The record gives the reactivity of an RNA of 207 nucleotides to 2A3. The RNA was probed in 150 mM KOAc, 10 mM MgCl2 and 150 mM bicine (pH 8.5) at 24 C.
RNA sequence: GGGAACGACUCGAGUAGAGUCGAAAAGGAGGAUUCGUCCUCCAAAAAAGAUAUGGACGAUGGCCAACGAGGUACAAGAGGUCGGAAACGACUCCCCACCUUGUACUACCCACCGUUGACCAUCGUCCUAAGUCAAAAACACUACUUCGGUAGUGAAUCACGGUAACAGUUUCGACUGUUACCGUGAAAAAGAAACAACAACAACAAC
Reactivity to 2A3 in 0.01 (KOAc 150mM, MgCl2 10mM, bicine 150mM(pH8.5), 24C), signal-to-noise 2, nucleotides 027 to 156: g000g000a010g000g000a010u120u050c140g090u050c020c010u070c090c110a000a000a000a080a000a000g090a040u080a050u060g010g000a000c010g000a000u000g000g020c000c000a000a000c000g000a000g020g000u000a020c000a000a000g010a000g100g000u020c030g030g020a090a080a020c080g020a020c040u100c040c040c000c000a030c000c000u000u020g000u010a000c000u020a040c020c100c020a020c040c000g010u000u010g010a000c010c000a000u000c000g000u010c000c000u010a020a000g010u000c000a000a000a040a120a020c000a000c000u000a000c020u060u040c130g160g000u010a000g000u010g050a060a040
Source information
It was measured as part of the RMDB library RNAMAK. Values cover nucleotides 27 to 156.